[RMDB]
Overview: Chemical mapping of a 207-nucleotide RNA with 2A3 and DMS. The 2A3 profile rests on 4,739 reads. Values cover nucleotides 27 to 156. High 2A3 reactivity points to a flexible backbone, as in loops and unpaired stretches.
RNA sequence: GGGAACGACUCGAGUAGAGUCGAAAAUCGCAAACCCGCGGCAAGUGGAGUUAGCGAGAGGAGGCUGGGUUUUGGCUUCCUUAAGCAAUCGGUCACCGAGAAGGUGUGGUCGUUACCGUGAAAUUCCGUGACAAAAUAACGUUCGCGUUAUUUUGAAUCAACUAUCGUAAUUCGUUACGAUAGUUGAAAAAGAAACAACAACAACAAC
Reactivity to 2A3 in 0.01 (KOAc 150mM, MgCl2 10mM, bicine 150mM(pH8.5), 24C), signal-to-noise 5, nucleotides 027 to 156: u070c010g010c020a020a030a060c000c010c010g000c010g050g020c090a150a080g060u090g060g020a090g020u050u060a020g020c010g010a040g000a000g030g010a000g010g000c020u060g070g060g150u080u110u210u260g020g000c010u000u020c000c000u000u010a060a010g010c020a020a040u070c020g030g010u030c020a010c030c040g050a070g110a240a090g120g010u150g000u010g090g000u010c020g020u030u050a090c030c010g000u030g060a110a040a050u060u000c020c030g030u080g060a040c000a000a000a010a000u000a010a010c000g020u030u050c240g010c000g110u000u000a000u000u000u000u010g020a000a070
Reactivity to DMS in 0.01 (KOAc 150mM, MgCl2 10mM, bicine 150mM(pH8.5), 24C), signal-to-noise 2, nucleotides 027 to 156: u000c020g030c030a040a070a100c010c010c020g020c040g010g000c040a070a100g030u010g020g020a100g020u000u000a130g020c010g000a300g010a010g010g000a030g010g000c000u000g040g020g030u010u000u010u000g030g020c000u000u000c000c010u010u000a020a300g000c020a070a040u030c030g010g000u000c040a080c030c010g000a150g030a120a090g030g020u000g010u000g020g020u000c020g000u000u000a050c040c020g010u010g000a120a110a140u000u000c030c020g000u000g010a270c000a010a030a010a010u000a000a000c010g020u000u010c300g020c060g030u000u000a000u000u000u000u000g020a090a200